[RMDB]
RNA sequence: GGGAACGACUCGAGUAGAGUCGAAAAAGAUACCGUUGUCGUGUAAAGUAAACAGACCAAAAGCUAAUCAGAUCAUGAAGUUAAGCAGAGGAGCGCGCAUACCUGAUUUUCCAACCGUAGAACAAGUCAGGAAAAUAUUUGAAGGUCUAGGCGACGAGCGUAGAAGGUAUUUCGAUACCUUCUACGCAAAAGAAACAACAACAACAAC
Reactivity to 2A3 in 0.01 (KOAc 150mM, MgCl2 10mM, bicine 150mM(pH8.5), 24C), signal-to-noise 2, nucleotides 027 to 156: a020g090a060u110a060c020c030g010u040u030g030u040c120g000u010g000u080a090a130a030g020u060a030a030a150c090a050g080a020c000c050a040a070a000a130g020c030u090a060a070u070c040a010g060a100u040c010a080u080g070a080a030g090u050u090a080a010g040c020a010g000a000g070g020a060g000c010g000c020g010c000a000u030a130c000c000u020g010a020u030u060u080u000c010c060a090a070c030c090g150u080a020g020a110a020c080a040a000g050u130c070a010g000g000a000a040a000a000u120a050u020u090u120g130a040a000g000g000u000c050u060a060g010g010c010g050a050c010g050a030
Reactivity to DMS in 0.01 (KOAc 150mM, MgCl2 10mM, bicine 150mM(pH8.5), 24C), signal-to-noise 2, nucleotides 027 to 156: a070g010a220u010a140c060c010g030u000u000g020u000c020g040u010g040u000a090a110a110g060u010a040a140a140c050a090g020a060c010c010a020a090a140a220g000c020u010a090a050u010c030a110g010a120u010c090a070u000g000a040a050g010u000u000a040a110g010c050a140g020a170g060g020a100g050c090g060c030g020c050a120u000a080c020c000u000g000a050u000u000u010u000c020c020a060a110c080c100g020u040a160g020a040a180c060a020a070g020u000c020a080g000g010a060a020a010a050u000a050u000u000u000g010a080a030g010g030u000c040u010a100g020g030c020g000a060c030g010a230
An RNA of 207 nucleotides, treated with 2A3 and DMS and read out base by base. The DMS profile rests on 2,532 reads. Conditions: 150 mM KOAc, 10 mM MgCl2 and 150 mM bicine (pH 8.5), 24 C. For 2A3 the reverse transcriptase was SuperScript II with manganese. For 2A3, 976 sequencing reads were counted.